[RMDB]
RNA sequence: GGGAACGACUCGAGUAGAGUCGAAAAGCUAUUAUUCGUAAUAGCAAACCUUCUCAAACAUUCUGUUUGGUAGUGAGUGAUACUCUUUGGAGUUAACUUGAAAUUGCUGGCCUUUAGGCGAACAAUGUUCUUAAAAAAAUGCGCGCUUCGGCGCGCACGUUUCAGUCUAAUUCGUUAGACUGAAACGAAAAGAAACAACAACAACAAC
Reactivity to DMS in 0.01 (KOAc 150mM, MgCl2 10mM, bicine 150mM(pH8.5), 24C), signal-to-noise 1, nucleotides 027 to 156: g040c000u000a010u000u000a040u000u010c240g060u000a020a010u000a000g010c030a130a110a190c050c040u000u010c040u010c040a160a050a150c010a130u010u010c090u000g040u000u020u000g050g000u000a120g020u000g000a050g030u000g010a230u000a020c030u000c010u000u000u000g040g010a120g010u000u000a220a030c030u000u000g000a070a070a080u000u000g000c000u000g050g000c050c040u010u000u020a070g090g000c030g010a060a020c040a050a040u000g000u000u010c020u000u010a040a010a060a080a040a060a120u000g030c020g000c000g080c000u000u010c300g060g010c030g070c010g010c000a000
Reactivity to 2A3 in 0.01 (KOAc 150mM, MgCl2 10mM, bicine 150mM(pH8.5), 24C), signal-to-noise 3, nucleotides 027 to 156: g020c000u020a050u020u000a060u030u160c160g050u050a010a000u000a020g000c000a030a030a080c020c000u110u080c100u030c040a100a120a060c040a090u230u130c100u300g050u100u110u040g080g040u050a070g080u020g170a000g020u030g030a050u070a230c010u010c000u080u080u250g160g010a020g000u020u000a010a030c010u010u070g080a050a100a100u050u080g010c050u050g080g070c020c040u130u240u220a140g020g020c020g020a010a020c010a040a070u100g040u130u080c090u120u200a080a130a070a070a020a010a030u120g000c050g050c000g030c040u090u070c240g080g040c030g000c050g010c020a010